[RMDB]
RNA sequence: GGGAACGACUCGAGUAGAGUCGAAAAUGUCCUCGGCCGUAUACCGCUAUGUGUCCAGUCGUGAUGAGCUGUUGACUUUGCUGCUCGUCGACGCCUACUCCGACCUGGCCGAUACCGUGGACCGAGCCACGUAGGGCUAUUUCGAUAGCCCUACGUGAAAAGAAACAACAACAACAAC
Reactivity to 2A3 in 0.01 (KOAc 150mM, MgCl2 10mM, bicine 150mM(pH8.5), 24C), signal-to-noise 4, nucleotides 027 to 126: u100g040u030c010c020u020c010g000g030c020c030g080u120a060u090a190c040c020g010c050u030a060u160g250u060g020u030c010c020a020g000u020c000g080u080g050a030u030g000a010g020c050u040g140u090u050g110a190c010u120u110u190g040c050u050g010c010u030c050g000u000c010g020a020c000g010c010c010u060a070c040u050c020c040g010a040c010c020u010g000g030c000c000g010a000u050a030c030c030g100u090g030g000a040c020c010g020a010g050c010
Reactivity to DMS in 0.01 (KOAc 150mM, MgCl2 10mM, bicine 150mM(pH8.5), 24C), signal-to-noise 4, nucleotides 027 to 126: u010g010u010c060c000u000c040g000g000c040c030g000u010a070u010a080c120c100g000c110u030a060u010g000u010g010u000c010c090a030g000u000c010g010u020g020a030u000g000a040g010c000u010g010u000u000g030a060c130u000u010u010g000c040u000g020c040u010c090g010u000c010g010a030c020g010c120c030u000a060c100u010c060c070g010a030c070c060u000g000g000c010c030g010a040u000a020c110c100g000u000g010g010a070c030c060g010a070g000c130
About this RNA: Structure probing data (2A3 and DMS) for a 177-nucleotide construct. Source: RMDB library OK2TST, as collected in RNAgym. 2A3 adducts were read by reverse transcription with SuperScript II with manganese. In probing experiments dimethyl sulfate is read out at A N1 and C N3, which are open when not base-paired. The reactions ran in a buffer of 150 mM KOAc, 10 mM MgCl2 and 150 mM bicine (pH 8.5), at 24 C.